Structure probing data (DMS) for a 177-nucleotide construct.
DMS adducts were read by reverse transcription with MarathonRT.
The RNA was probed in 150 mM KOAc, 10 mM MgCl2 and 150 mM bicine (pH 8.5) at 24 C.
RNA sequence: GGGAACGACUCGAGUAGAGUCGAAAAAUCUCGUUCGGUAAAGAGACCAAAGGCAAGCGCCGUCUGGUUAUCUCACCGUUGGAUGGUAGCGAUGCAUACGAAGAGAUGAUUCCGAAAUGGCGUCAGCGAGCGAAGUCUUGUUCGCAAGACUUCGCUCAAAAGAAACAACAACAACAAC
Reactivity to DMS in 0.01 (KOAc 150mM, MgCl2 10mM, bicine 150mM(pH8.5), 24C), signal-to-noise 1, nucleotides 027 to 126: a010u010c010u000c020g000u020u000c010g000g030u020a070a030a030g000a100g000a000c020c020a080a040a280g010g000c000a150a270g010c250g080c010c010g030u000c110u010g000g060u000u000a060u000c030u020c300a020c010c000g030u000u000g000g020a080u000g000g020u000a050g000c040g000a060u010g000c080a170u000a080c010g000a050a100g000a020g030a020u000g040a160u000u010c010c020g000a040a040a120u000g020g000c020g000u000c060a050g010c150